This 177-nucleotide RNA was probed chemically with DMS. Reactivities are rounded to 0.1 and cut off at 0 and 3. The reactions ran in a buffer of 150 mM KOAc, 10 mM MgCl2 and 150 mM bicine (pH 8.5), at 24 C. The data come from the RNA Mapping Database (RMDB), library M2PK90.
[RMDB]
RNA sequence: GGGAACGACUCGAGUAGAGUCGAAAAACAAAGAGCAACACGCGCAGUCACGCAGGCAGAUGGAAUAAUCUGCCAAGAAUAACUAAUGGACGGUAGACUGCGCGAACCACCGACCAAUAGUAAAAAAUCCUAACAGUGAGUUCGCUCACUGUUAGGAAAAAGAAACAACAACAACAAC
Reactivity to DMS in 0.01 (KOAc 150mM, MgCl2 10mM, bicine 150mM(pH8.5), 24C), signal-to-noise 1, nucleotides 027 to 126: a070c130a010a060a120g000a180g020c090a000a060c080a210c000g010c000g000c000a000g020u000c040a200c270g050c120a170g000g000c010a000g060a040u000g020g000a150a090u000a030a050u000c000u010g050c000c010a030a000g000a150a160u010a050a010c120u000a020a100u000g030g000a060c020g000g020u000a040g030a010c000u000g000c000g000c020g020a060a010c140c050a000c010c020g020a020c040c000a030a050u030a050g030u000a010a020a060a070a100a120